[RMDB]
This 177-nucleotide RNA was probed chemically with 2A3 and DMS.
The RNA was probed in 150 mM KOAc, 10 mM MgCl2 and 150 mM bicine (pH 8.5) at 24 C.

RNA sequence: GGGAACGACUCGAGUAGAGUCGAAAACUAUUUAUAGACAGAACAGUGGAAAACGUAUAUCGCUAUAAACCUUACACACCGAGUCUUCCAGUCGUACCAUUCCACAUAGGCGAGGCAUAAGCGAAAGCACGUCGUGCUAUUUCGAUAGCACGACGUGAAAAGAAACAACAACAACAAC
Reactivity to 2A3 in 0.01 (KOAc 150mM, MgCl2 10mM, bicine 150mM(pH8.5), 24C), signal-to-noise 3, nucleotides 027 to 126: c000u040a050u010u140u010a140u050a010g050a020c070a010g030a140a030c050a040g070u100g070g100a150a150a020a040c010g060u030a060u030a040u180c010g000c020u010a010u010a170a050a040c010c060u050u130a060c090a000c000a000c020c010g020a000g020u020c000u020u000c010c000a000g060u040c000g000u010a070c000c010a020u010u060c040c010a070c000a090u060a030g020g010c000g030a030g000g030c010a060u050a150a020g000c030g060a100a010a000g030
Reactivity to DMS in 0.01 (KOAc 150mM, MgCl2 10mM, bicine 150mM(pH8.5), 24C), signal-to-noise 2, nucleotides 027 to 126: c050u000a080u000u010u010a080u030a030g020a160c020a290g040a030a060c040a080g070u010g020g020a080a090a150a060c150g010u020a080u040a030u050c010g000c050u000a060u020a020a060a070c080c040u030u040a090c130a040c080a140c090c020g000a020g000u000c020u030u010c020c020a030g000u030c030g000u030a030c030c050a070u030u050c090c040a030c060a020u000a040g000g030c050g020a020g000g000c020a050u020a060a050g020c060g000a050a060a140g020